Chemical mapping of a 177-nucleotide RNA with 2A3 and DMS.
In probing experiments dimethyl sulfate is read out at A N1 and C N3, which are open when not base-paired.
It was measured as part of the RMDB library RFMREP.
The RNA was probed in 150 mM KOAc, 10 mM MgCl2 and 150 mM bicine (pH 8.5) at 24 C.
The DMS profile rests on 1,307 reads.
For DMS the reverse transcriptase was MarathonRT.
For 2A3, 1,990 sequencing reads were counted.
[RMDB]
RNA sequence: GGGAACGACUCGAGUAGAGUCGAAAAGACACGGGUGAAGCGAUAGGGCUACACGCAAGUGACAUGGUGGUCAGGCUGCCGGAUAGCAGAUAGAGCGUGUGAUUCUUUGGAAACAGCAAAGGAUGGUCACUAUAUCCGAGUUCGCUCGGAUAUAGUGAAAAGAAACAACAACAACAAC
Reactivity to 2A3 in 0.01 (KOAc 150mM, MgCl2 10mM, bicine 150mM(pH8.5), 24C), signal-to-noise 2, nucleotides 027 to 126: g060a020c050a010c070g030g010g020u050g050a050a000g000c010g060a070u090a110g080g050g040c000u020a010c020a000c020g030c000a060a060g040u010g080a010c020a050u100g040g040u050g010g010u070c010a000g110g020c010u030g040c020c000g130g050a090u140a050g000c010a010g040a090u120a050g060a030g050c070g010u020g030u020g070a070u040u000c030u040u000u100g050g000a140a120a060c010a040g010c050a030a010a020g010g000a030u050g000g030u010
Reactivity to DMS in 0.01 (KOAc 150mM, MgCl2 10mM, bicine 150mM(pH8.5), 24C), signal-to-noise 2, nucleotides 027 to 126: g000a080c110a030c100g000g000g030u000g020a100a070g010c040g020a090u030a080g020g000g010c100u000a040c020a030c030g000c040a060a080g000u010g000a090c100a050u010g000g010u010g040g010u000c030a070g000g020c020u000g040c030c030g000g030a100u000a100g010c030a070g010a050u000a070g000a040g000c060g000u010g010u010g000a090u000u010c010u000u020u010g000g020a110a120a070c260a060g000c040a050a040a030g000g010a040u000g000g010u000